[RMDB]
RNA sequence: GGGAACGACUCGAGUAGAGUCGAAAAACGGGUGCGUAUUACGGGCCGAUCACAGCACUCGACUUUGCGAGUCUGUACCCGAGUAUCAUGUGCGCCGAGAACCUAUGUUAUUCGACACUGGUCAUGAACUCCCGGUACGACAACUUGCCAGGCGUCAUCUUGAAUGCAGAUUCGUCUGCAUUCAAGAAAAAGAAACAACAACAACAAC
Reactivity to 2A3 in 0.01 (KOAc 150mM, MgCl2 10mM, bicine 150mM(pH8.5), 24C), signal-to-noise 4, nucleotides 027 to 156: a000c040g030g000g000u050g010c020g000u080a070u060u190a090c050g020g030g000c100c040g050a080u150c090a020c010a060g000c030a010c010u010c010g050a080c070u090u080u170g050c020g010a010g020u000c010u130g020u070a060c000c000c010g010a030g030u070a120u180c060a040u070g050u060g050c040g010c060c050g020a020g030a080a050c050c070u090a060u210g060u040u050a160u120u130c040g010a000c000a010c080u070g020g020u090c040a040u070g050a040a000c020u030c020c030c060g000g010u050a050c040g030a020c030a060a040c040u040u050g020c020c050a020g050g010c010g020u070c030a030
Reactivity to DMS in 0.01 (KOAc 150mM, MgCl2 10mM, bicine 150mM(pH8.5), 24C), signal-to-noise 2, nucleotides 027 to 156: a060c030g000g020g030u000g000c040g000u000a110u000u010a120c000g010g010g010c030c010g020a140u010c060a100c090a140g020c090a040c050u000c010g010a120c070u000u000u010g040c010g020a050g000u010c010u010g030u010a000c010c000c030g010a110g030u010a090u000c020a050u000g030u000g020c080g000c020c000g000a110g010a070a040c020c070u000a090u010g030u000u000a130u000u000c060g030a040c020a100c010u000g020g010u010c040a050u000g020a080a120c050u000c010c040c020g020g010u010a070c040g010a070c010a050a080c050u000u000g010c000c070a040g020g020c120g040u000c040a190